[RMDB]
RNA sequence: GGGAACGACUCGAGUAGAGUCGAAAAGAUAUGGACGAAUUCCGAGAACUACGAACCUCGAUCGGAAACGAUCGGGAUUCGCUCGGAGAUUCGUCCUAAGUCAAAACGUCCUGGUUCGCCAGGACGACUAAAUGAACAGCUUCGGCUGUUCAUUUAGAAAAGAAACAACAACAACAAC
Reactivity to DMS in 0.01 (KOAc 150mM, MgCl2 10mM, bicine 150mM(pH8.5), 24C), signal-to-noise 4, nucleotides 027 to 126: g000a050u000a300u010g000g010a010c000g000a000a020u000u000c000c000g000a040g020a140a090c150u010a300c040g000a010a000c020c000u000c000g010a010u000c010g010g000a170a100a220c010g000a010u000c000g020g000g000a020u000u000c010g000c020u010c000g010g000a040g010a010u000u000c000g010u000c000c010u000a010a130g000u010c040a100a060a110a230c030g000u000c000c000u010g000g010u010u010c260g010c010c010a020g010g000a000c000g000a070
Reactivity to 2A3 in 0.01 (KOAc 150mM, MgCl2 10mM, bicine 150mM(pH8.5), 24C), signal-to-noise 3, nucleotides 027 to 126: g010a010u080a030u210g000g010a000c000g010a000a010u030u000c000c040g010a010g040a110a160c300u300a060c180g000a010a010c000c000u000c020g010a000u000c020g010g000a080a060a040c010g010a010u000c000g010g030g000a000u010u010c020g020c040u000c010g020g000a060g040a010u000u010c000g000u000c000c000u000a000a010g020u010c020a040a000a050a100c030g000u000c000c000u010g030g050u060u070c300g040c120c000a010g010g000a010c000g000a010